[RMDB]
RNA sequence: GGGAACGACUCGAGUAGAGUCGAAAAGAAAUACGCAAAGAACUAGAAAGUUUAUUUACGCCAAUGAUCGAGAAAUUUUGUUCUAAUGCGUUACUGGUAUAGCAAAUUUGCACUUUCUAAGCUCAGACCCCUAGGAAAAUUUCGAUUUUCCUAGGGGAAAAGAAACAACAACAACAAC
Reactivity to 2A3 in 0.01 (KOAc 150mM, MgCl2 10mM, bicine 150mM(pH8.5), 24C), signal-to-noise 2, nucleotides 027 to 126: g020a010a010a000u130a030c020g010c000a000a010a030g010a050a010c020u010a010g030a060a050a020g030u100u150u050a110u050u220u060a040c010g010c000c030a030a070u090g020a010u040c040g000a030g190a130a240a130u140u170u100u100g040u000u000c010u050a130a030u150g000c000g000u000u020a010c030u010g040g000u050a030u030a110g060c100a120a070a200u000u000u030g000c010a020c020u040u010u040c010u030a060a050g000c000u050c050a100g080a220
Reactivity to DMS in 0.01 (KOAc 150mM, MgCl2 10mM, bicine 150mM(pH8.5), 24C), signal-to-noise 2, nucleotides 027 to 126: g000a060a020a040u000a170c220g020c040a010a040a060g030a260a080c010u010a040g000a270a130a050g000u000u000u000a070u020u010u010a030c020g010c000c070a090a120u020g000a050u010c020g020a040g010a160a070a170u000u040u000u000g000u000u000c020u000a090a140u010g010c040g000u010u030a020c040u000g020g000u010a090u010a030g000c070a000a080a200u000u010u000g010c030a050c170u010u000u000c010u020a030a130g010c030u000c010a140g030a300